The data come from the RNA Mapping Database (RMDB), library OK1LIB. Chemical mapping of a 177-nucleotide RNA with 2A3 and DMS. Reactivities are given for positions 27 through 126. DMS adducts were read by reverse transcription with MarathonRT. For 2A3, 2,395 sequencing reads were counted. For DMS, 2,539 sequencing reads were counted.

[RMDB]
RNA sequence: GGGAACGACUCGAGUAGAGUCGAAAAGUCCGGCGGACACUUAUACCUGGGGUCGCAAAACGACGGUGGGGACUUGUCAUGGCACAACUGACGGCACUGGAUGCGGGUUUUCUCAAGUCCCGCGAUCCUCAGUCGUAUGCUUCGGCAUACGACUGAGAAAAGAAACAACAACAACAAC
Reactivity to 2A3 in 0.01 (KOAc 150mM, MgCl2 10mM, bicine 150mM(pH8.5), 24C), signal-to-noise 4, nucleotides 027 to 126: g050u010c010c000g050g020c020g030g040a030c030a020c120u190u100a090u070a250c020c040u050g030g000g030g030u050c010g000c080a080a070a030a030c030g100a010c000g000g020u080g030g020g010g040a040c000u040u140g010u100c030a130u100g070g000c060a030c020a130a080c040u130g050a040c030g060g000c030a010c080u050g040g030a050u110g030c000g010g010g000u030u020u100u000c070u010c030a040a030g040u060c000c000c000g000c010g010a030u030c000
Reactivity to DMS in 0.01 (KOAc 150mM, MgCl2 10mM, bicine 150mM(pH8.5), 24C), signal-to-noise 2, nucleotides 027 to 126: g040u030c000c020g010g010c010g000g000a090c070a050c040u000u010a130u000a150c110c060u000g000g010g000g010u000c020g000c050a030a090a060a110c110g010a030c080g000g020u030g010g020g000g020a040c040u000u000g060u000c040a000u040g020g030c070a040c100a060a100c080u000g020a020c020g020g050c040a040c020u010g020g010a130u000g000c050g000g020g000u010u020u000u000c110u010c130a090a090g010u040c000c000c000g000c010g030a050u010c070